This 207-nucleotide RNA was probed chemically with 2A3. Values cover nucleotides 27 to 156.
RNA sequence: GGGAACGACUCGAGUAGAGUCGAAAAAAAAACGCUGGGUGGAUGGAGGUUGUGGUUGUCAGCUCCUCUGAAGCGCGCACGGAGGAGCUUGGAUUUACCACGUCAGCCUCCGCCACCUGUGCUGAAGCGCGCACGGCAACCGAAAGGUGCGAAAAAAGGAUUAGAACUAGUUCGCUAGUUCUAAUCCAAAAGAAACAACAACAACAAC
Reactivity to 2A3 in 0.01 (KOAc 150mM, MgCl2 10mM, bicine 150mM(pH8.5), 24C), signal-to-noise 2, nucleotides 027 to 156: a020a000a020a000a000c030g000c020u020g030g030g030u010g040g060a300u100g060g010a090g010g010u220u250g000u080g030g020u020u050g020u020c060a040g020c000u020c020c000u060c010u010g040a110a070g010c020g000c040g010c000a010c050g000g010a000g000g000a000g000c020u000u100g000g020a010u160u040u190a060c000c000a040c050g100u180c130a020g010c000c000u000c010c000g000c000c010a000c000c000u000g010u000g000c020u000g020a120a040g000c010g000c010g000c010a010c030g010g000c010a020a020c000c030g020a110a020a020g000g000u030g010c000g090a090a020a080a040a000a020
For 2A3, 1,202 sequencing reads were counted. The RNA was probed in 150 mM KOAc, 10 mM MgCl2 and 150 mM bicine (pH 8.5) at 24 C.